[RMDB]
RNA sequence: GGGAACGACUCGAGUAGAGUCGAAAAUAGUGUUUCAGCCACAAGCGGUCCGUAACACUGAAAAACAUGCUUUUGGCCUGAUCCAUAAUACGAUUCAACCAACAAACUCCCUUCGAAAACUGGCGAGAAUCGCAGGAAUAUUCGUAUUCCUGCGAUUAAAAGAAACAACAACAACAAC
Reactivity to 2A3 in 0.01 (KOAc 150mM, MgCl2 10mM, bicine 150mM(pH8.5), 24C), signal-to-noise 9, nucleotides 027 to 126: u120a010g050u020g010u020u020u020c010a020g000c010c000a030c030a050a050g050c040g050g030u070c040c050g050u090a110a020c060a040c110u110g090a100a050a010a040a000c050a060u190g030c030u060u040u040u050g020g000c010c030u030g010a030u000c010c010a020u060a180a090u110a140c060g020a020u000u090c030a060a060c050c010a020a050c040a030a110a020c020u030c010c000c000u040u060c030g050a030a040a080a100c050u050g070g010c050g010a040g090
Reactivity to DMS in 0.01 (KOAc 150mM, MgCl2 10mM, bicine 150mM(pH8.5), 24C), signal-to-noise 5, nucleotides 027 to 126: u030a030g020u000g000u000u000u010c020a080g000c050c010a040c130a060a060g020c090g010g010u010c040c120g040u020a080a050c100a040c080u020g000a040a070a060a040a050c110a080u010g010c030u010u010u010u010g000g030c090c040u000g000a020u010c030c030a050u000a060a060u010a100c120g000a060u010u010c060a070a120c090c030a060a080c130a030a100a150c110u000c000c010c000u020u020c070g010a030a030a060a040c100u010g000g010c050g000a130g010
The record gives the reactivity of an RNA of 177 nucleotides to 2A3 and DMS. DMS adducts were read by reverse transcription with MarathonRT. 2A3 adducts were read by reverse transcription with SuperScript II with manganese. The 2A3 profile rests on 12,208 reads.